[RMDB]
RNA sequence: GGGAACGACUCGAGUAGAGUCGAAAACUUGUUCUCGAGGGCUUUCCUUCUUCGGUGAGCCCGCCUCUCCUCGUCGGUGAAGUCUCCCGCGCGGGUCCUCUUCCUAGGUCCGGAAUCAACCUCCAUCGACAUAUCAACAGUUCGCUGUUGAUAUGUCAAAAGAAACAACAACAACAAC
Reactivity to 2A3 in 0.01 (KOAc 150mM, MgCl2 10mM, bicine 150mM(pH8.5), 24C), signal-to-noise 1, nucleotides 027 to 126: c000u030u080g030u110u020c030u010c040g040a040g040g000g040c010u040u040u040c000c000u080u130c080u160u180c040g040g000u020g030a010g010c000c010c020g020c000c000u050c000u020c020c000u020c000g080u040c030g070g020u070g100a050a020g040u060c070u010c000c000c020g060c020g000c040g030g030g020u010c000c010u000c000u040u040c010c010u020a040g010g000u010c010c030g020g040a020a070u040c020a000a030c010c030u030c010c000a060u040c050
Reactivity to DMS in 0.01 (KOAc 150mM, MgCl2 10mM, bicine 150mM(pH8.5), 24C), signal-to-noise 1, nucleotides 027 to 126: c050u000u010g010u000u000c000u010c030g040a100g040g010g020c050u000u000u000c020c010u010u000c190u020u010c150g030g010u010g010a040g000c030c030c040g010c100c010u000c040u000c020c010u010c080g000u000c060g000g010u000g010a100a090g000u010c020u010c040c050c020g000c130g030c050g000g000g000u000c020c020u010c050u010u000c030c040u010a080g000g010u000c030c030g000g000a090a100u000c110a090a090c070c010u000c060c040a100u000c100